[RMDB]
RNA sequence: GGGAACGACUCGAGUAGAGUCGAAAAGAGAUUUUUCUUUCUUUAUGAUGGAGUGGAGAGGACAUGAACCAUCAGAACACUCACGUAGGCUCGGGACUGGCCUUUCCAGGGCAGUUGCUGGGCAGCACUGGCUUGCCAGCCACAGUGAUCAGGAGGACGUCGCUUUUACUUUCGAGUAAAAGCGACGAAAAGAAACAACAACAACAAC
Reactivity to 2A3 in 0.01 (KOAc 150mM, MgCl2 10mM, bicine 150mM(pH8.5), 24C), signal-to-noise 2, nucleotides 027 to 156: g070a000g030a010u060u090u060u160u030c000u060u050u000c010u000u170u090a100u070g020a030u020g020g030a050g020u040g010g030a100g000a040g050g050a050c020a030u170g030a040a070c000c010a040u020c000a010g070a100a020c060a010c040u030c010a080c120g040u110a090g110g000c000u000c000g000g000g000a000c000u070g230g080c000c020u060u180u120c060c060a000g000g020g010c020a000g010u020u100g150c010u020g000g030g000c000a000g000c010a010c020u060g000g040c010u020u190g070c040c150a000g000c010c000a020c030a020g050u050g030a040u040c010a020g000g000a020g040g030a040

Source information:
The record gives the reactivity of an RNA of 207 nucleotides to 2A3. The RNA was probed in 150 mM KOAc, 10 mM MgCl2 and 150 mM bicine (pH 8.5) at 24 C. The data come from the RNA Mapping Database (RMDB), library OK3TST. Values cover nucleotides 27 to 156.